Background: Chemical mapping of a 177-nucleotide RNA with 2A3 and DMS. The RNA was probed in 150 mM KOAc, 10 mM MgCl2 and 150 mM bicine (pH 8.5) at 24 C. 2A3 adducts were read by reverse transcription with SuperScript II with manganese. The 2A3 profile rests on 1,683 reads.

RNA sequence: GGGAACGACUCGAGUAGAGUCGAAAAUUAAAAAUGCACUCUUCAACCUCUAUGAUGAAGAACUGGAAUAGAAUGCAAUGAAAAAGAGCACAACGCCGCCUGCAACGUUACUUUUUCAAGUGCUCACCACGUAGGAGGGUUUCGACCCUCCUACGUGAAAAGAAACAACAACAACAAC
Reactivity to 2A3 in 0.01 (KOAc 150mM, MgCl2 10mM, bicine 150mM(pH8.5), 24C), signal-to-noise 3, nucleotides 027 to 126: u160u120a000a040a000a000a080u060g030c020a030c060u030c000u030u050c030a100a150c000c040u160c040u120a150u180g090a110u090g020a100a070g020a050a030c040u080g050g030a050a080u050a110g060a050a070u070g090c000a000a020u080g080a030a040a000a010a060g030a000g030c030a000c000a050a000c030g030c040c000g060c030c050u030g020c040a100a000c060g060u050u060a170c030u030u020u010u050u140c090a190a050g020u000g030c000u000c020a040c010
Reactivity to DMS in 0.01 (KOAc 150mM, MgCl2 10mM, bicine 150mM(pH8.5), 24C), signal-to-noise 2, nucleotides 027 to 126: u000u000a000a080a000a070a120u070g000c050a090c100u000c020u000u010c080a100a110c040c030u020c070u000a090u010g000a180u000g000a140a090g010a060a060c180u020g040g010a070a050u000a060g000a020a070u030g000c040a020a100u000g010a040a020a020a080a070g030a110g000c060a050c020a090a030c080g010c000c040g060c000c020u010g010c040a100a140c100g000u000u000a060c100u000u050u000u000u000c220a010a040g020u010g020c020u010c020a070c100